[RMDB]
RNA sequence: GGGAACGACUCGAGUAGAGUCGAAAAAGACACGAAAGAGCAAGGAGGAAAGGCAGACCGAGGGAAUGCAGAGGAUCGGCGCGUCGAGGACGCUUCGCUGUUCUUCUCGCCGCUGCCUCUCGGGGUGCCCCAUCCAUCCCUUCGGGGAUGGAUGGGGAAAAGAAACAACAACAACAAC
Reactivity to 2A3 in 0.01 (KOAc 150mM, MgCl2 10mM, bicine 150mM(pH8.5), 24C), signal-to-noise 2, nucleotides 027 to 126: a000g020a000c010a000c030g040a070a000a050g030a000g040c070a080a070g130g000a020g000g050a150a080a010g010g070c070a030g040a020c000c030g000a000g020g010g050a070a070u230g010c030a010g000a040g130g020a120u180c010g010g020c000g000c010g080u150c100g030a080g100g010a010c010g010c000u200u070c210g000c110u170g000u050u040c000u100u010c010u010c040g050c060c040g030c000u020g030c030c000u000c000u000c010g000g000g000g100u030g020
Reactivity to DMS in 0.01 (KOAc 150mM, MgCl2 10mM, bicine 150mM(pH8.5), 24C), signal-to-noise 1, nucleotides 027 to 126: a140g000a110c010a190c090g000a070a180a070g000a030g010c050a080a070g000g040a070g000g000a030a060a060g030g000c070a050g000a110c130c000g010a050g000g000g000a130a280u010g030c000a000g000a060g030g000a080u090c010g000g000c000g000c100g000u030c120g040a170g000g000a020c000g000c030u000u010c080g000c110u050g010u000u000c050u000u000c050u050c020g010c060c040g000c040u000g000c050c000u010c020u000c010g000g010g000g000u000g010